[RMDB]
This 177-nucleotide RNA was probed chemically with DMS.
DMS adducts were read by reverse transcription with MarathonRT.
Conditions: 150 mM KOAc, 10 mM MgCl2 and 150 mM bicine (pH 8.5), 24 C.
It was measured as part of the RMDB library OK2TRN.
RNA sequence: GGGAACGACUCGAGUAGAGUCGAAAACUCAAUACCUCCACGAAGCCGGAUACACGAAAAACGGCAAAAAAAUAGGAUGCACCCAACCUCGUCGUGUGGCCGCCAUGUCUGUUGCAGCACGUGUGGCAUGCCUAGACGGUUUCGACCGUCUAGGCAUAAAAGAAACAACAACAACAAC
Reactivity to DMS in 0.01 (KOAc 150mM, MgCl2 10mM, bicine 150mM(pH8.5), 24C), signal-to-noise 1, nucleotides 027 to 126: c030u020c000a160a100u030a210c060c050u000c070c010a120c050g000a120a120g060c020c020g010g000a190u000a050c180a020c100g000a070a030a030a090a090c010g000g020c080a000a000a020a090a010a060a110u010a020g000g000a050u000g000c090a020c020c020c070a060a050c010c040u000c020g000u000c060g020u010g040u000g020g060c010c030g000c040c030a010u000g010u000c080u000g000u000u000g090c090a080g000c080a040c120g010u030g010u000g040g110c040